[RMDB]
RNA sequence: GGGAACGACUCGAGUAGAGUCGAAAACAGUAAGGUGAUGGGCAGUAUUUCUAAUCCAGAAAUUCGCCGGAUGGAGCUGAUGAACACCAUCGCCGGUAUUGAGCGUUACGCUGCCGCAGAGGGUGAUGUGGGGAUGUUUAUCACGCUGACCGCGCCGGCAAUUAGCUUCAUUCGUGAAGCUAAUUGCAAAAGAAACAACAACAACAAC
Reactivity to DMS in 0.01 (KOAc 150mM, MgCl2 10mM, bicine 150mM(pH8.5), 24C), signal-to-noise 1, nucleotides 027 to 156: c080a220g050u000a060a060g010g040u000g010a100u000g010g000g040c020a070g020u000a080u000u000u000c050u000a090a130u010c020c040a060g030a070a060a180u010u000c150g030c010c000g000g000a080u000g010g030a080g060c080u000g040a060u020g010a100a100c040a080c010c070a030u000c000g020c020c000g010g010u000a060u000u000g020a070g000c020g000u000u010a140c030g050c040u000g040c010c040g010c060a180g010a160g050g010g080u000g020a120u000g020u000g010g000g030g000a110u000g000u000u020u000a040u000c000a030c060g010c010u000g000a120c010c020g000c070g040c040c000g010
Reactivity to 2A3 in 0.01 (KOAc 150mM, MgCl2 10mM, bicine 150mM(pH8.5), 24C), signal-to-noise 3, nucleotides 027 to 156: c020a010g140u120a090a080g020g020u050g020a070u110g020g020g030c060a120g030u050a050u010u080u000c030u070a110a090u070c070c010a000g070a030a070a030u100u050c080g000c040c040g000g020a040u090g010g010a040g000c010u010g000a030u010g000a040a010c030a020c000c020a000u000c030g010c040c000g010g010u090a140u050u160g040a040g010c030g030u110u070a080c140g000c070u060g060c030c020g030c050a020g040a030g160g000g020u050g030a020u010g110u220g030g020g010g110a050u060g040u000u000u000a030u030c020a020c140g020c000u010g040a040c000c010g010c010g010c000c000g020